[RMDB]
RNA sequence: GGGAACGACUCGAGUAGAGUCGAAAAGAUAUGGACUCGCUGCGAUAAUUGCGAUGAAAUCGAGGUUCGAAGUUUCGGAAACGAAACGUAGUUCGAUGGAGCAAGUAUCGCAGCGAGUCCUAAGUCACUCUACCUUUACCUUCGGGUAAAGGUAGAGAAAAGAAACAACAACAACAAC
Reactivity to DMS in 0.01 (KOAc 150mM, MgCl2 10mM, bicine 150mM(pH8.5), 24C), signal-to-noise 1, nucleotides 027 to 126: g000a040u000a300u000g000g000a000c000u010c010g020c000u000g000c000g010a000u000a000a030u000u000g060c000g020a120u010g030a040a080a010u000c010g000a030g000g000u000u000c050g000a150a300g010u000u000u010c000g010g010a100a080a210c000g000a050a000a000c000g010u000a170g020u000u000c010g000a020u000g000g010a040g000c040a000a010g000u020a000u010c010g010c030a000g000c000g020a020g010u000c000c000u000a000a060g010u000c000a270
This 177-nucleotide RNA was probed chemically with DMS. For DMS the reverse transcriptase was MarathonRT. The reactions ran in a buffer of 150 mM KOAc, 10 mM MgCl2 and 150 mM bicine (pH 8.5), at 24 C. It was measured as part of the RMDB library TTRINS.